[RMDB]
Chemical mapping of a 177-nucleotide RNA with DMS and 2A3. Reactivities are given for positions 27 through 126. For 2A3, 85,289 sequencing reads were counted. Conditions: 150 mM KOAc, 10 mM MgCl2 and 150 mM bicine (pH 8.5), 24 C.
RNA sequence: GGGAACGACUCGAGUAGAGUCGAAAAGCUAGAGCGUUGUCGUAUUAGGCCGGAUAUGCGACGGCUGCGAAGCGGUCGGUCAGUUUGAUCCUGACCGGCCUAAGGAUCUUACUGGUGCUCUAGGAAAGGGUUGAUCGGGCUUCGGUCCGGUUAGCCCAAAAGAAACAACAACAACAAC
Reactivity to DMS in 0.01 (KOAc 150mM, MgCl2 10mM, bicine 150mM(pH8.5), 24C), signal-to-noise 9, nucleotides 027 to 126: g010c000u000a000g000a020g010c000g010u010u010g010u000c050g010u010a110u010u010a030g010g010c000c000g010g000a190u030a070u020g010c040g000a060c010g000g010c010u000g000c130g010a100a070g020c060g010g010u000c000g000g000u000c000a010g010u010u020u030g000a130u030c170c000u000g010a040c010c000g000g000c010c000u000a000a030g010g010a070u020c080u010u010a070c080u010g000g010u020g010c000u000c000u000a010g000g010a070a100a130
Reactivity to 2A3 in 0.01 (KOAc 150mM, MgCl2 10mM, bicine 150mM(pH8.5), 24C), signal-to-noise 9, nucleotides 027 to 126: g060c000u000a000g000a000g010c010g040u040u080g090u110c030g010u040a060u050u090a070g040g010c010c010g020g030a070u070a040u280g070c040g020a010c010g050g000c010u030g020c030g040a060a010g030c020g010g000u010c000g000g010u010c000a010g000u020u150u190g040a030u050c010c010u010g020a020c000c000g000g000c000c000u000a030a010g030g010a050u040c020u040u090a060c030u090g040g010u050g010c000u000c000u000a010g010g010a060a060a050